[RMDB]
RNA sequence: GGGAACGACUCGAGUAGAGUCGAAAAGAUCGAGGUCUGCCCUCUUCCUCAUAUAUCCUUACCACGGCAGACUUCGAAGGGCUUGAGCAUGAGGAAGAGGUGGUAAGGAUAUGUCUCAAGCCUUAGACUACACGUUUCUAUUCGUAGAAGCGUGUAGAAAAGAAACAACAACAACAAC
Reactivity to 2A3 in 0.01 (KOAc 150mM, MgCl2 10mM, bicine 150mM(pH8.5), 24C), signal-to-noise 7, nucleotides 027 to 126: g060a040u010c000g000a000g000g000u000c000u000g000c000c010c000u010c010u020u020c000c010u000c050a020u120a020u010a010u140c000c000u010u040a040c020c030a130c070g020g000c010a000g000a000c000u010u000c000g000a020a040g030g000g000c000u000u000g000a000g000c000a020u030g000a000g000g010a010a020g000a020g020g150u160g020g040u040a020a010g000g000a000u010a020u030g040u000c000u000c000a000a000g000c000c000u010u020a030g020a010
Reactivity to DMS in 0.01 (KOAc 150mM, MgCl2 10mM, bicine 150mM(pH8.5), 24C), signal-to-noise 9, nucleotides 027 to 126: g000a140u000c010g010a020g000g000u000c000u000g010c010c010c050u000c010u000u000c000c000u000c010a110u010a090u000a030u000c010c010u000u000a050c060c070a150c180g010g000c010a020g000a020c010u000u000c010g010a040a060g010g000g000c010u000u000g000a020g010c000a040u000g000a020g000g000a030a020g000a030g030g040u010g010g010u000a030a030g000g010a020u000a010u000g000u010c010u000c010a010a010g000c000c000u000u000a060g010a300